[RMDB]
Chemical mapping of a 177-nucleotide RNA with DMS.
RNA sequence: GGGAACGACUCGAGUAGAGUCGAAAACAUCAGCCAGCGGCUCAAGGGCAAGGAGGGGAGAGUGCGCGGGAAUCUCAUGGGCAAACGUGUGGACUUCUCAGCGCGCACAGUCAUCUCAGGAGACCCCGCGUGAGUAGCAAUUCGUUGCUACUCACGCAAAAGAAACAACAACAACAAC
Reactivity to DMS in 0.01 (KOAc 150mM, MgCl2 10mM, bicine 150mM(pH8.5), 24C), signal-to-noise 1, nucleotides 027 to 126: c080a120u020c050a110g010c030c070a060g000c090g050g000c000u000c120a110a100g010g000g030c030a050a080g010g000a150g050g030g030g010a060g000a040g060u000g030c030g030c020g000g010g000a100a090u000c000u010c000a070u000g000g010g030c100a080a070a130c100g000u000g000u000g000g000a060c150u000u000c070u000c110a010g010c030g010c000g020c000a010c040a170g010u000c140a110u000c010u000c010a160g000g020a100g000a130c050c000c090c030

In probing experiments dimethyl sulfate is read out at A N1 and C N3, which are open when not base-paired.